Source: RMDB library M2RFPK, as collected in RNAgym. The record gives the reactivity of an RNA of 207 nucleotides to 2A3 and DMS. DMS adducts were read by reverse transcription with MarathonRT. 2A3 adducts were read by reverse transcription with SuperScript II with manganese. For DMS, 2,233 sequencing reads were counted.

RNA sequence: GGGAACGACUCGAGUAGAGUCGAAAAACGAGUCGUACGCGACUCGAAUGGUAUUGUCGGCGUAAAAGAACAAGACGUCACCGGACGCGACCGGGGUAAAAAGCGAAACGUCAUCUACGGAUGACGAAAAACGGACCUGGGUUCGCCCAGGUCCGAAGUAAGGACUAUACUUCGGUAUAGUCCUUACAAAAGAAACAACAACAACAAC
Reactivity to 2A3 in 0.01 (KOAc 150mM, MgCl2 10mM, bicine 150mM(pH8.5), 24C), signal-to-noise 4, nucleotides 027 to 156: a000c000g000a000g010u000c000g020u040a030c230g020c040g110a010c010u020c000g020a020a080u090g070g040u190a140u160u220g100u150c070g010g030c010g010u070a040a050a140a120g120a140a060c070a090a000g080a020c000g000u010c000a010c020c000g000g000a010c000g010c010g020a000c000c000g000g000g020g010u050a000a000a000a000a000g000c010g010a070a050a020c010g000u000c010a010u000c000u000a020c210g080g000a010u000g010a000c000g020a080a010a000a000a010c000g000g000a000c000c000u000g000g000g040u040u090c140g060c030c000c000a000g020g000u000c000c000g000a000a000
Reactivity to DMS in 0.01 (KOAc 150mM, MgCl2 10mM, bicine 150mM(pH8.5), 24C), signal-to-noise 1, nucleotides 027 to 156: a100c050g010a020g000u000c000g000u000a130c180g030c010g000a050c000u000c000g030a030a030u080g000g020u020a070u000u010g000u020c020g050g010c030g010u020a090a090a100a120g000a070a190c090a120a100g000a070c030g000u000c010a050c030c020g000g000a130c090g030c060g000a140c000c000g020g000g000g030u020a030a070a020a020a070g000c010g010a100a060a060c010g000u000c010a010u000c020u000a130c270g040g010a030u000g000a000c000g010a010a040a010a110a080c010g010g030a010c010c010u010g000g010g030u000u000c300g020c020c000c010a000g000g010u000c000c030g010a000a010